The record gives the reactivity of an RNA of 207 nucleotides to DMS. The data come from the RNA Mapping Database (RMDB), library OK3TST.
[RMDB]
RNA sequence: GGGAACGACUCGAGUAGAGUCGAAAAAGAAGGAAACCUACUAUUAGCCCCCCGUCCUGCACGCCGUGGAGCAUCAGGCCACACACUCUGCAUCCGACACCCACCCCCUCUUUGUGUACUUCAGUCUUGGAGUUUGGAACUCUACCCUGGUAGGAAAAGUGUAAAGUAGAUUCGUCUACUUUACACUAAAAGAAACAACAACAACAAC
Reactivity to DMS in 0.01 (KOAc 150mM, MgCl2 10mM, bicine 150mM(pH8.5), 24C), signal-to-noise 1, nucleotides 027 to 156: a070g000a180a030g000g000a140a080a090c030c010u000a070c060u010a170u000u010a270g010c030c000c040c010c010c010g000u040c010c040u000g000c040a080c060g020c020c040g020u000g000g010a020g010c040a100u000c040a080g010g000c020c040a080c080a060c050a100c060u000c040u000g010c010a110u000c030c050g010a090c080a070c010c000c020a200c090c020c040c030c010u010c060u000u010u000g020u020g030u000a090c040u000u000c030a090g030u000c060u000u010g010g020a030g010u000u000u010g000g020a070a120c000u000c010u000a050c050c020c000u000g020g010u010a080g040g000a050a050a100